[RMDB]
RNA sequence: GGGAACGACUCGAGUAGAGUCGAAAACAUGAUCGCCUGGCAAUGCUCGCCCGGUGUGGAAAGAUCGAUCGUUGGCUGAUCGACCGUAUCGGUCUUGUAAUUGAGCGCGCGCGCCAGAAUACGUGCAGUCCAUGCCUGAUUUCGAUCAGGCAUGGACAAAAGAAACAACAACAACAAC
Reactivity to 2A3 in 0.01 (KOAc 150mM, MgCl2 10mM, bicine 150mM(pH8.5), 24C), signal-to-noise 1, nucleotides 027 to 126: c030a020u160g000a080u070c030g070c000c000u000g000g050c000a130a060u230g000c040u040c000g040c000c040c000g000g000u050g090u120g100g150a220a020a000g040a000u000c010g000a000u010c030g010u050u260g050g100c110u180g040a160u070c040g020a040c010c030g000u020a000u020c010g000g000u020c000u020u070g140u110a080a070u030u050g010a010g030c020g000c000g000c000g030c020g020c080c010a030g050a030a020u230a060c070g030u090g040c030a020
Reactivity to DMS in 0.01 (KOAc 150mM, MgCl2 10mM, bicine 150mM(pH8.5), 24C), signal-to-noise 1, nucleotides 027 to 126: c070a070u010g010a070u000c090g050c150c020u000g000g010c000a110a130u000g000c020u000c000g000c030c000c020g000g000u000g000u050g020g000a180a020a020g000a020u000c030g010a000u000c100g000u000u000g030g000c120u000g010a090u000c090g010a070c130c060g000u000a000u000c010g000g000u000c020u000u010g000u000a150a070u000u000g000a040g000c020g000c160g020c040g000c250g020c010c000a020g000a130a080u000a070c090g000u010g020c130a160
Structure probing data (2A3 and DMS) for a 177-nucleotide construct. 2A3 adducts were read by reverse transcription with SuperScript II with manganese. The DMS profile rests on 1,026 reads. It was measured as part of the RMDB library OK2TST. Conditions: 150 mM KOAc, 10 mM MgCl2 and 150 mM bicine (pH 8.5), 24 C. Reactivities are given for positions 27 through 126.